[RMDB]
RNA sequence: GGGAACGACUCGAGUAGAGUCGAAAAGAUGCGCCGGGCGGCCCGCUGGUAGAAAGGGGAAAUCGCCAGUGCUGACUCGCUUCAUCCGACGCCAGUUGAUCCUUUUUGCGAUCGUCUCCGUAGUCGCGCUGAUACCGGCGUUCGCGCCGGUAUCAGCAAAAGAAACAACAACAACAAC
Reactivity to 2A3 in 0.01 (KOAc 150mM, MgCl2 10mM, bicine 150mM(pH8.5), 24C), signal-to-noise 2, nucleotides 027 to 126: g100a070u100g020c020g010c050c020g030g000g000c020g000g020c000c020c000g030c010u010g000g050u120a180g130a150a090a060g120g090g000g000a010a130a060u110c030g020c020c040a000g030u000g010c030u010g020a060c020u000c120g000c000u090u040c040a070u050c070c000g070a040c080g030c070c010a020g000u030u020g090a110u080c020c000u040u200u050u220u170g080c110g030a040u040c000g040u030c010u070c040c010g010u090a020g100u050c070g000c030